Chemical mapping of a 177-nucleotide RNA with DMS and 2A3. Reactivities are rounded to 0.1 and cut off at 0 and 3. DMS (dimethyl sulfate) methylates the pairing face of unpaired adenines and cytosines. 2A3 adducts were read by reverse transcription with SuperScript II with manganese. For 2A3, 11,484 sequencing reads were counted. Values cover nucleotides 27 to 126. For DMS the reverse transcriptase was MarathonRT. Source: RMDB library OK1LIB, as collected in RNAgym.
RNA sequence: GGGAACGACUCGAGUAGAGUCGAAAAGUGGUCGAGUGCGAAGCACUGGGGUAGAGAAAUAAAGAGAAAGAGAACUACCCCGUCAGUCAGUCACUCUCUGUCUGAAUCUCUCUCUCAAAGACCACGAAAUCCAUAGGUGAUUCGUCACCUAUGGAUUAAAAGAAACAACAACAACAAC
Reactivity to DMS in 0.01 (KOAc 150mM, MgCl2 10mM, bicine 150mM(pH8.5), 24C), signal-to-noise 7, nucleotides 027 to 126: g020u000g000g010u000c010g010a090g000u000g000c010g010a170a100g010c050a010c030u010g010g010g000g000u020a010g000a140g010a080a090a080u040a090a130a070g010a020g000a030a060a040g010a030g010a210a100c030u010a040c010c030c030c050g010u020c040a030g000u000c070a030g000u010c220a080c150u020c080u010c020u010g010u000c000u000g000a090a090u010c050u000c010u000c020u000c020u000c020a080a140a110g000a000c000c000a010c010g010a030
Reactivity to 2A3 in 0.01 (KOAc 150mM, MgCl2 10mM, bicine 150mM(pH8.5), 24C), signal-to-noise 9, nucleotides 027 to 126: g000u000g010g000u010c010g020a030g020u040g030c090g170a160a020g020c040a010c080u060g000g010g020g010u050a000g040a010g080a080a180a070u240a040a180a000g080a010g050a040a250a010g060a010g010a040a020c010u020a020c000c020c000c000g020u010c000a010g000u000c010a000g010u020c050a080c170u070c030u000c010u020g030u020c000u000g050a140a120u030c010u010c000u000c000u000c000u000c060a100a050a000g000a000c000c000a000c010g000a020